[RMDB]
RNA sequence: GGGAACGACUCGAGUAGAGUCGAAAAGGGGUUGCCUUCGGGCAACCCCAAAGCAGCAAUGGCCUUAAAGCUGCAAACACGGAAAAACCGUGAAAGGCCUAAAAACGGCAUCCUUCGGGAUGCCGAACAUAGUCAAAUAGUUCGCUAUUUGACUAUGAAAAGAAACAACAACAACAAC
Reactivity to 2A3 in 0.01 (KOAc 150mM, MgCl2 10mM, bicine 150mM(pH8.5), 24C), signal-to-noise 1, nucleotides 027 to 126: g030g000g000g000u000u010g020c050c030u080u070c200g060g050g000c010a000a000c010c010c010c000a000a000a000g000c010a000g010c020a040a270u090g000g000c000c010u000u050a000a060a060g000c010u000g020c000a020a050a000c000a000c010g000g040a060a110a110a050a050c010c000g000u010g000a060a010a010g010g000c000c010u020a050a020a000a000a010c020g000g010c010a000u000c010c010u040u090c070g060g010g000a010u000g010c010c000g000a000a000
Reactivity to DMS in 0.01 (KOAc 150mM, MgCl2 10mM, bicine 150mM(pH8.5), 24C), signal-to-noise 3, nucleotides 027 to 126: g020g050g020g020u010u000g000c020c000u000u000c200g030g000g030c010a000a010c000c010c000c010a000a010a070g010c010a000g030c010a180a120u010g020g000c000c000u010u000a050a140a210g010c010u000g000c000a070a100a270c030a000c000g000g000a150a160a030a170a140c010c000g020u000g000a010a050a050g000g010c000c010u000a040a030a050a090a080c020g000g000c000a010u000c000c000u000u020c190g010g010g000a010u000g010c010c000g010a010a050

The record gives the reactivity of an RNA of 177 nucleotides to 2A3 and DMS. The reactions ran in a buffer of 150 mM KOAc, 10 mM MgCl2 and 150 mM bicine (pH 8.5), at 24 C. DMS adducts were read by reverse transcription with MarathonRT. In probing experiments dimethyl sulfate is read out at A N1 and C N3, which are open when not base-paired. It was measured as part of the RMDB library M2PK50.